[RMDB]
RNA sequence: GGGAACGACUCGAGUAGAGUCGAAAAGAUGCACUCUGAUUAGCUAAUUCAUAGAAUGGCUGGUCACUUCAAGGGUGUAUCGGAUUCUGUGGUGAGCCGCCCACGAAGUUGAACUAGAAAUUUAGCCAUGUACAUUAACGUUCGCGUUAAUGUACAUAAAAGAAACAACAACAACAAC
Reactivity to DMS in 0.01 (KOAc 150mM, MgCl2 10mM, bicine 150mM(pH8.5), 24C), signal-to-noise 8, nucleotides 027 to 126: g000a010u000g010c010a010c010u000c000u010g000a010u000u000a030g010c010u000a070a040u000u010c020a180u040a160g010a010a020u010g000g020c000u000g020g010u000c000a120c240u040u030c300a170a050g000g000g010u000g010u000a000u000c000g000g010a100u000u000c010u010g020u000g010g020u010g000a050g020c030c020g010c050c010c000a110c150g010a070a130g010u010u000g010a060a080c090u010a090g000a090a080a130u010u010u010a060g000c170c150
Reactivity to 2A3 in 0.01 (KOAc 150mM, MgCl2 10mM, bicine 150mM(pH8.5), 24C), signal-to-noise 7, nucleotides 027 to 126: g000a000u000g000c000a000c010u000c070u110g020a010u030u010a000g000c010u080a280a110u060u030c030a120u150a230g030a030a010u010g010g000c000u010g010g000u010c010a040c110u260u220c140a100a050g000g000g000u020g000u010a010u010c010g010g000a020u050u000c010u050g040u020g050g050u120g030a030g010c010c000g000c010c010c000a020c040g050a080a050g030u130u190g020a030a010c040u070a090g080a110a200a160u140u180u090a060g010c040c030

Conditions: 150 mM KOAc, 10 mM MgCl2 and 150 mM bicine (pH 8.5), 24 C. This 177-nucleotide RNA was probed chemically with DMS and 2A3.